An RNA of 177 nucleotides, treated with 2A3 and read out base by base. Source: RMDB library OK1LIB, as collected in RNAgym. 2A3 adducts were read by reverse transcription with SuperScript II with manganese. The 2A3 profile rests on 693 reads. Conditions: 150 mM KOAc, 10 mM MgCl2 and 150 mM bicine (pH 8.5), 24 C.
RNA sequence: GGGAACGACUCGAGUAGAGUCGAAAACUGCUGCUGGAUGAGCCGACGUCAGCGCUGGAUAUCGCCCAUCAGGUUGACGUGCUGGCGCUGGUGCAUCGUUUAAGCCAACAGCGCGGGCUGACGGUGGGGGAGGAUGCGUAUUCGUACGCAUCCUCCCAAAAGAAACAACAACAACAAC
Reactivity to 2A3 in 0.01 (KOAc 150mM, MgCl2 10mM, bicine 150mM(pH8.5), 24C), signal-to-noise 2, nucleotides 027 to 126: c070u120g040c050u080g000c060u120g040g040a180u080g030a130g020c070c000g030a050c040g040u030c000a000g000c030g010c050u050g050g000a060u040a060u220c020g010c000c050c000a130u060c090a050g000g080u100u240g090a030c030g000u010g000c000u000g000g000c000g000c000u010g000g060u060g000c000a080u020c000g010u040u000u100a110a070g000c000c000a090a030c030a100g020c000g010c000g000g000g000c040u080g110a040c060g030g040u100g080g000